[RMDB]
Chemical mapping of a 177-nucleotide RNA with DMS and 2A3. Conditions: 150 mM KOAc, 10 mM MgCl2 and 150 mM bicine (pH 8.5), 24 C. Values are in units of 0.01, from 0 to 300, in steps of 10.

RNA sequence: GGGAACGACUCGAGUAGAGUCGAAAAGACUAAUCGUAAGCCUGUAUAUGACUUAGUGAGCCGUUCAGUGAUGAGAACUGACAAUCGUUACCACUCGGCAAGUCAGGUAUACUUAGAGAUUAGAGAAGAUAUUCUGGAAUUUCGAUUUUAGGAUAUCAAAAGAAACAACAACAACAAC
Reactivity to DMS in 0.01 (KOAc 150mM, MgCl2 10mM, bicine 150mM(pH8.5), 24C), signal-to-noise 9, nucleotides 027 to 126: g010a160c010u000a010a000u000c000g010u000a020a050g010c210c140u010g000u000a020u020a080u010g010a020c010u000u010a110g020u030g010a140g010c060c050g000u020u010c210a070g000u000g010a090u010g010a100g010a100a110c130u020g010a090c210a090a080u010c040g010u000u010a030c030c040a300c110u000c010g010g010c020a030a030g000u000c000a010g000g040u000a010u010a040c010u000u000a030g000a120g000a010u000u000a010g000a150g000a100a110
Reactivity to 2A3 in 0.01 (KOAc 150mM, MgCl2 10mM, bicine 150mM(pH8.5), 24C), signal-to-noise 9, nucleotides 027 to 126: g050a010c000u010a000a010u000c000g040u030a020a020g020c010c030u010g060u010a060u010a020u100g070a110c010u020u030a040g080u140g280a040g030c020c010g030u100u090c060a010g000u010g040a110u100g060a050g050a130a070c070u090g060a040c070a040a100u080c030g010u020u050a040c020c000a010c020u010c000g010g000c020a010a010g010u000c000a000g030g000u020a020u010a040c010u010u040a020g020a000g000a060u000u010a010g000a000g010a090a000